[RMDB]
RNA sequence: GGGAACGACUCGAGUAGAGUCGAAAAUUCAGCAUCGCAUGUCUUAGCGGUAACAACAGGAAUAACAAUAGCAACAAGAGUUAUUUCUAUAGAUGCCAUUGCUUCCAGCUGACUCUUAGCACUGAUACUAAUUCUUCUGGCUGUUCAGUUAAGAUGAAGACUCGAAAUAGUUCGCUAUUUCGAGUCUAAAAGAAACAACAACAACAAC
Reactivity to 2A3 in 0.01 (KOAc 150mM, MgCl2 10mM, bicine 150mM(pH8.5), 24C), signal-to-noise 4, nucleotides 027 to 156: u050u040c040a020g020c010a030u050c040g020c090a040u090g070u080c050u100u070a060g000c040g070g000u060a040a080c040a020a020c020a030g030g010a040a000u070a030a010c050a050a130u180a080g140c050a060a090c040a220a010g060a010g110u000u010a030u010u040u000c020u010a060u090a110g060a050u040g000c010c020a060u040u130g000c010u050u010c020c010a010g030c030u030g040a070c030u020c010u060u050a010g020c030a040c120u060g030a040u050a090c020u070a160a110u130u070c020u090u040c020u030g070g000c040u040g060u060u040c010a020g010u030u080a030a020g020a040u100g070a050
Reactivity to DMS in 0.01 (KOAc 150mM, MgCl2 10mM, bicine 150mM(pH8.5), 24C), signal-to-noise 2, nucleotides 027 to 156: u010u000c040a060g090c040a080u000c050g000c060a140u000g010u000c060u000u030a090g060c050g000g050u000a060a080c030a190a090c040a070g020g020a070a030u000a040a020c030a040a130u030a120g020c110a080a150c070a130a110g010a300g010u000u000a060u000u000u010c020u000a130u000a160g000a240u000g000c020c020a120u000u000g000c010u000u010c020c020a110g000c060u010g010a080c030u000c060u000u010a040g020c000a090c040u000g020a120u010a060c080u010a040a050u000u000c060u000u000c020u010g020g040c020u010g010u010u000c070a110g010u000u000a070a050g010a100u000g000a170
Structure probing data (2A3 and DMS) for a 207-nucleotide construct. The DMS profile rests on 2,849 reads.